[RMDB]
RNA sequence: GGGAACGACUCGAGUAGAGUCGAAAAGAUUUAAACAGAUGGAGAUACACAAAUGUUUGAAUCCCAGUAACAAAAAUCCUGGUAUCUCGGGUAUACAGUAGUGAAGAUACUGUAUUUUUAAUGCUCCUUAGGUUUUCCAUCUUCGGAUGGAAAACAAUGUGUGUAUUCUGUUCGCAGAAUACACACAAAAAGAAACAACAACAACAAC
Reactivity to 2A3 in 0.01 (KOAc 150mM, MgCl2 10mM, bicine 150mM(pH8.5), 24C), signal-to-noise 1, nucleotides 027 to 156: g020a000u000u000u020a050a010a000c000a020g030a060u060g000g000a030g000a000u010a050c000a010c000a040a090a030u010g000u000u010u020g020a020a040u080c000c030c020a100g230u190a120a120c090a190a210a000a000a010u000c000c000u000g010g000u020a010u000c020u010c000g020g010g000u000a000u000a000c010a000g000u010a010g050u050g190a140a020g050a260u000a010c000u000g000u000a000u010u030u000u000u160a150a160u060g030c020u120c060c060u050u060a030g110g100u010u020u000u000c000c000a020u000c000u060u060c180g030g000a000u000g000g000a000a000a000a000c000a000a000

Background: Structure probing data (2A3) for a 207-nucleotide construct. Source: RMDB library M2RFOK, as collected in RNAgym. For 2A3 the reverse transcriptase was SuperScript II with manganese. Values cover nucleotides 27 to 156. The 2A3 profile rests on 684 reads.